[RMDB]
RNA sequence: GGGAACGACUCGAGUAGAGUCGAAAAAUACAGUACGAAAGUACAAAGAAGCAAUCAAACCGAGCAGUGAAAUGAUGGCUUCAGUGCAAAAUGGGCAAACACUGCAGACGGAGCCAAAGGCAAAUAAGUAAGUAAUUAACUUCGGUUAAUUACUUACAAAAGAAACAACAACAACAAC
Reactivity to 2A3 in 0.01 (KOAc 150mM, MgCl2 10mM, bicine 150mM(pH8.5), 24C), signal-to-noise 4, nucleotides 027 to 126: a000u170a030c050a010g010u000a000c010g050a130a030a010g030u010a010c000a000a070a020g040a040a000g010c030a020a050u070c030a070a010a070c040c030g010a020g010c020a020g010u050g080a080a070a160u110g050a030u070g050g000c000u120u080c050a050g080u050g070c020a010a040a050a200u070g030g020g000c000a020a080a000c000a010c030u010g040c000a010g050a040c030g030g000a010g030c000c000a070a080a020g060g000c020a050a060a080u100a160a050
Reactivity to DMS in 0.01 (KOAc 150mM, MgCl2 10mM, bicine 150mM(pH8.5), 24C), signal-to-noise 5, nucleotides 027 to 126: a080u010a080c160a130g040u000a010c000g010a130a060a160g020u010a000c010a070a100a140g000a020a020g010c010a050a020u010c030a050a120a100c060c030g000a090g000c030a030g000u000g000a100a070a070u000g010a050u000g000g020c010u000u010c020a070g010u000g000c130a030a040a070a070u000g010g000g010c060a070a060a110c040a030c050u010g010c020a090g010a120c080g020g000a100g020c010c020a030a060a080g010g010c050a030a070a060u010a050a110

An RNA of 177 nucleotides, treated with 2A3 and DMS and read out base by base. For 2A3, 5,958 sequencing reads were counted. Conditions: 150 mM KOAc, 10 mM MgCl2 and 150 mM bicine (pH 8.5), 24 C. 2A3 adducts were read by reverse transcription with SuperScript II with manganese. Source: RMDB library M2PK90, as collected in RNAgym.